[RMDB]
RNA sequence: GGGAACGACUCGAGUAGAGUCGAAAAUAGGAGCGUGGGGGGGCCGGUGGAGCCAUGGGAUGCUCCUCCCGAUUCCGUCCAUCCCCCCCCCCAGGAGGUCCCCCCAGGAAUGGCGGGACCCCACUCUACGGUACGUGCUUCGGCACGUACAAAAGAAACAACAACAACAAC
Reactivity to DMS in 0.01 (KOAc 150mM, MgCl2 10mM, bicine 150mM(pH8.5), 24C), signal-to-noise 4, nucleotides 027 to 129: u080a060g060g000a020g060c080g040u060g050g000g000g030g000g030g020c140c150g070g070u030g000g020a030g040c000c070a070u100g040g010g010a080u090g030c070u020c050c040u000c090c020c040g020a180u000u030c060c020g020u010c050c110a020u020c000c010c010c010c000c000c000c000c000c000a130g020g000a130g050g000u020c000c000c000c060c000c000a000g010g080a120a160u020g010g040c300g030g000g000a000c010c000c000c000a050c080u050c060u030a140c170g000
Reactivity to 2A3 in 0.01 (KOAc 150mM, MgCl2 10mM, bicine 150mM(pH8.5), 24C), signal-to-noise 3, nucleotides 027 to 129: u200a020g000g000a010g030c060g030u250g000g000g010g000g000g000g000c050c030g010g010u050g010g010a040g040c030c030a130u110g020g000g030a040u190g040c010u010c010c010u010c000c000c000g030a040u050u010c020c010g080u030c020c010a030u040c010c000c000c000c000c000c000c000c000c000a040g030g020a070g000g010u010c020c000c000c000c000c000a010g040g090a110a170u040g000g000c000g000g000g000a000c000c000c000c000a020c010u060c030u050a020c110g030